[RMDB]
RNA sequence: GGGAACGACUCGAGUAGAGUCGAAAAGAAAGACUUCCUGUCCCCAGUUUUCAGGUGUGGAAACUGAGGCAGGAGGCAGUGAAGUAACUUGCUCAGGUUGCACAGCUGGGAAGUGGAGCAGGGAUAAAUACAAAACCUGCUUCGGCAGGUUUUGUAUAAAAGAAACAACAACAACAAC
Reactivity to 2A3 in 0.01 (KOAc 150mM, MgCl2 10mM, bicine 150mM(pH8.5), 24C), signal-to-noise 2, nucleotides 027 to 126: g140a080a170a010g150a090c010u010u040c000c000u050g200u300c020c050c000c000a000g000u000u000u010u010c040a110g110g130u150g210u080g240g000a000a000a000c000u000g000a000g000g000c000a000g040g030a000g000g000c000a010g010u110g040a040a110g090u040a020a100c010u010u120g020c000u060c000a020g000g060u020u110g040c040a040c090a120g050c040u020g020g040g120a110a020g040u050g080g010a110g000c050a030g010g000g040a090u150a030a270
Reactivity to DMS in 0.01 (KOAc 150mM, MgCl2 10mM, bicine 150mM(pH8.5), 24C), signal-to-noise 1, nucleotides 027 to 126: g000a150a100a090g000a220c020u000u010c000c010u010g010u090c000c030c050c020a000g000u000u000u000u000c000a050g080g000u020g040u080g000g000a000a000a000c000u010g000a080g010g030c010a010g000g000a080g000g040c050a050g020u010g010a150a080g010u000a040a020c000u000u000g010c040u010c060a130g000g000u000u040g010c060a080c130a070g030c110u000g000g000g000a040a050g010u020g000g050a130g020c000a000g000g000g020a130u000a130a140
Notes: The record gives the reactivity of an RNA of 177 nucleotides to 2A3 and DMS. For 2A3 the reverse transcriptase was SuperScript II with manganese. The RNA was probed in 150 mM KOAc, 10 mM MgCl2 and 150 mM bicine (pH 8.5) at 24 C. Source: RMDB library RFM100, as collected in RNAgym.